Chemical mapping of a 207-nucleotide RNA with 2A3. As a SHAPE reagent, 2A3 marks flexible, mostly unpaired nucleotides at the ribose 2'-OH. The data come from the RNA Mapping Database (RMDB), library RNAMAK. Reactivities are given for positions 27 through 156. The 2A3 profile rests on 1,145 reads.
RNA sequence: GGGAACGACUCGAGUAGAGUCGAAAAGGGGUCCUGGGAGGGAUCGAUCACAGCGACGAUCUACACUGAAGCCUCCACGGUGUAGGGAGCUGUGGCCGAUCCCAUCGAUCAGGACGGAGGCACCCAAAAUCCUAUUAACGUUCGCGUUAAUAGGAAAUCACCUAAGAAGCUUCGGCUUCUUAGGUGAAAAAGAAACAACAACAACAAC
Reactivity to 2A3 in 0.01 (KOAc 150mM, MgCl2 10mM, bicine 150mM(pH8.5), 24C), signal-to-noise 1, nucleotides 027 to 156: g020g020g080g100u010c020c020u000g030g000g010a040g000g000g030a000u000c000g000a000u000c010a000c000a010g010c000g160a260c010g000a220u000c000u000a000c010a000c000u000g070a060a020g030c010c000u030c010c000a000c000g070g000u000g000u000a000g000g000g000a010g000c010u000g000u010g000g010c010c010g060a040u000c010c000c000a020u190c000g000a000u040c000a000g000g010a000c000g000g000a000g000g000c000a060c000c000c010a020a070a000a070u060c000c000u000a000u010u000a020a010c010g070u040u110c300g010c020g220u020u030a000a000u050a000g010g060a020a000a010